[RMDB]
Annotation:
The record gives the reactivity of an RNA of 177 nucleotides to DMS and 2A3. The RNA was probed in 150 mM KOAc, 10 mM MgCl2 and 150 mM bicine (pH 8.5) at 24 C. 2A3 adducts were read by reverse transcription with SuperScript II with manganese. Source: RMDB libraries RFM100 and RFMREP, as collected in RNAgym.
RNA sequence: GGGAACGACUCGAGUAGAGUCGAAAACUUGCGCAAUGGGGAACGGCCGGAAUUGAAGCAUCUCAGUACGGCCAGGAAGAGAAAUCGAAUGAGACGCCGUUAGUAAUGGCGAAUGAACGCGGCACAGGAUUUAGCAGAUAUUCGUAUCUGCUAAAUCAAAAGAAACAACAACAACAAC
Reactivity to DMS in 0.01 (KOAc 150mM, MgCl2 10mM, bicine 150mM(pH8.5), 24C), signal-to-noise 9, nucleotides 027 to 126: c050u000u000g010c040g020c030a070a050u010g000g000g000g010a140a130c160g010g000c010c000g010g000a110a040u000u000g010a060a120g020c180a110u030c080u010c020a030g010u000a050c010g010g000c010c010a070g010g000a070a080g000a080g000a040a080a070u010c050g020a110a080u030g010a100g000a150c140g010c010c010g000u000u010a080g000u010a070a020u000g000g020c170g000a070a030u000g000a120a120c160g000c010g000g020c020a110c170a110g000
Reactivity to 2A3 in 0.01 (KOAc 150mM, MgCl2 10mM, bicine 150mM(pH8.5), 24C), signal-to-noise 9, nucleotides 027 to 126: c010u060u120g010c040g000c030a040a170u110g030g000g010g030a050a060c040g000g000c010c000g010g030a110a020u030u030g010a060a010g090c070a180u070c020u000c060a010g010u030a010c010g000g000c000c000a010g020g030a040a040g030a020g040a070a060a030u120c080g070a090a110u190g030a050g020a080c090g000c000c000g000u010u010a010g000u010a020a010u030g120g040c160g040a010a000u010g000a010a000c000g000c000g010g020c020a010c040a060g110